[RMDB]
RNA sequence: GGGAACGACUCGAGUAGAGUCGAAAAGACUUGUGGUUCGCCACAAGUCAAAUAAGCAUGUAGAAAUGGCCAAACUACAUGCAUCGAAAGAUAGGCCAUAAAAAAGGACAUGCUUCGGCAUGUCCAACCAAUUAAUCUACUUCGGUAGAUUAAUUGGAAAAGAAACAACAACAACAAC
Reactivity to DMS in 0.01 (KOAc 150mM, MgCl2 10mM, bicine 150mM(pH8.5), 24C), signal-to-noise 3, nucleotides 027 to 126: g000a020c000u000u000g010u010g010g000u000u010c220g050c010c000a010c000a000a020g000u000c000a010a090a060u000a100a170g010c000a000u000g000u010a000g010a030a010a020u010g030g010c010c000a250a180a060c000u000a010c010a000u000g000c000a090u010c170g010a090a100a120g000a120u000a060g030g020c000c010a130u020a000a020a050a040a050a040g020g000a000c000a010u000g010c010u000u010c120g020g000c000a010u000g010u000c000c010a020a060
Reactivity to 2A3 in 0.01 (KOAc 150mM, MgCl2 10mM, bicine 150mM(pH8.5), 24C), signal-to-noise 7, nucleotides 027 to 126: g000a000c000u000u010g000u000g020g050u050u080c200g040c060c000a000c000a000a000g000u000c000a000a000a000u010a010a010g000c000a000u010g000u010a000g010a020a050a020u020g010g000c010c010a020a030a010c000u000a000c010a010u010g020c010a050u170c060g180a130a090a040g130a060u250a140g010g000c000c000a000u080a000a040a000a000a000a010g000g000a000c000a000u010g010c020u060u090c180g110g000c000a000u000g000u000c000c000a000a000